[RMDB]
RNA sequence: GGGAACGACUCGAGUAGAGUCGAAAAUCUGCCGUGAGUGGCACACGGAGGAGGCACCACGUGCUCUAUCCGUGCGGAAUCGACAUCAAGAGAUUUCGGAAGCAUAAUUUUUGGCGACCGGGGCAGCUUCAGGGAUACCGUUCGCGGUAUCCCUGAAAAAAGAAACAACAACAACAAC
Reactivity to 2A3 in 0.01 (KOAc 150mM, MgCl2 10mM, bicine 150mM(pH8.5), 24C), signal-to-noise 2, nucleotides 027 to 126: u000c000u020g000c030c010g300u030g120a160g050u110g030g000c030a000c000a000c000g000g020a000g040g050a030g060g030c000a010c120c020a080c180g130u060g050c030u030c020u050a300u000c000c000g000u000g000c000g000g000a000a010u020c010g040a070c000a160u120c050a090a030g020a010g000a040u000u010u000c010g000g000a030a010g030c000a050u160a300a200u100u100u110u070u170g050g000c000g010a010c010c000g000g040g000g000c000a010g020c010
Reactivity to DMS in 0.01 (KOAc 150mM, MgCl2 10mM, bicine 150mM(pH8.5), 24C), signal-to-noise 1, nucleotides 027 to 126: u010c000u000g000c000c040g030u070g000a040g000u000g020g030c040a060c000a000c010g000g010a010g000g050a130g000g040c000a060c010c190a230c300g000u000g040c020u010c000u000a180u000c000c010g050u000g020c020g050g000a000a000u000c060g010a230c300a100u070c210a210a030g000a280g020a000u000u000u000c000g000g000a070a060g000c230a070u000a110a070u000u010u000u000u010g030g000c000g000a030c000c000g020g000g000g020c030a030g010c250
An RNA of 177 nucleotides, treated with 2A3 and DMS and read out base by base.
2A3 adducts were read by reverse transcription with SuperScript II with manganese.
DMS adducts were read by reverse transcription with MarathonRT.
The reactions ran in a buffer of 150 mM KOAc, 10 mM MgCl2 and 150 mM bicine (pH 8.5), at 24 C.